[RMDB]
Notes
An RNA of 207 nucleotides, treated with 2A3 and read out base by base. Reactivities are given for positions 27 through 156. Conditions: 150 mM KOAc, 10 mM MgCl2 and 150 mM bicine (pH 8.5), 24 C.

RNA sequence: GGGAACGACUCGAGUAGAGUCGAAAAGAUAUGGACUUUGGAGGUGGGCUAGAUCUUGGAUUUAGGUGAUCGGAAACGAUCACCUUGUCAGAUCUAGAACUACCCGCGAAGAAGUCCUAAGUCAAAACAAAUACAGAAGUUCGCUUCUGUAUUUGAAGAGCUAAAAACACUUCGGUGUUUUUAGCUCAAAAGAAACAACAACAACAAC
Reactivity to 2A3 in 0.01 (KOAc 150mM, MgCl2 10mM, bicine 150mM(pH8.5), 24C), signal-to-noise 1, nucleotides 027 to 156: g050a000u040a030u090g010g000a010c000u000u030u020g040g090a220g240g140u060g000g010g120c010u010a000g000a000u030c030u060u220g130g000a070u240u120u030a010g000g000u000g000a000u000c010g010g100a080a050a050c010g010a000u000c000a000c010c010u000u000g000u010c010a010g000a000u000c000u010a000g010a010a050c010u040a010c000c000c000g010c000g040a060a070g020a000a000g000u040c000c000u000a040a000g000u010c010a040a020a130a230c000a000a000a110u180a000c000a000g010a010a000g040u040u130c140g040c190u010u000c000u010g000u000a000u010u000u000g000a040a000